[RMDB]
RNA sequence: GGGAACGACUCGAGUAGAGUCGAAAAACGUGUGAACAGUUUGAGUGUGGUAGCGCUGUGUGAGUUGGCGGUGGAACCCCCUCGUGGUGACACGAGCCCCCGUGGCCAAAAGCCCAGUGUUUACAGCCCACACUUGCGUUUUCGAACGCAAGUGUGGAAAAGAAACAACAACAACAAC
Reactivity to DMS in 0.01 (KOAc 150mM, MgCl2 10mM, bicine 150mM(pH8.5), 24C), signal-to-noise 1, nucleotides 027 to 126: a000c070g050u020g000u000g020a110a110c140a030g010u010u040u060g000a170g020u060g010u040g020g000u000a020g000c040g000c000u000g000u010g020u010g000a140g000u010u020g010g000c040g000g220u070g040g000a050a170c050c000c030c130c000u010c020g020u000g000g020u020g000a220c000a020c040g000a150g000c000c000c020c000c010g000u010g000g020c040c020a010a060a120a210g000c000c000c000a100g000u000g060u020u000u060a100c000a080g020c300
Reactivity to 2A3 in 0.01 (KOAc 150mM, MgCl2 10mM, bicine 150mM(pH8.5), 24C), signal-to-noise 2, nucleotides 027 to 126: a000c060g170u130g000u020g120a060a000c030a080g000u040u060u080g120a080g010u130g000u060g100g040u080a010g010c000g000c030u010g010u000g000u000g080a150g060u010u020g040g010c010g010g010u020g010g030a070a100c010c010c000c000c000u020c000g000u040g020g000u060g030a040c020a000c010g000a020g070c000c010c000c000c000g040u080g150g000c060c020a010a020a020a020g020c050c030c010a050g050u020g010u010u020u050a040c020a020g000c040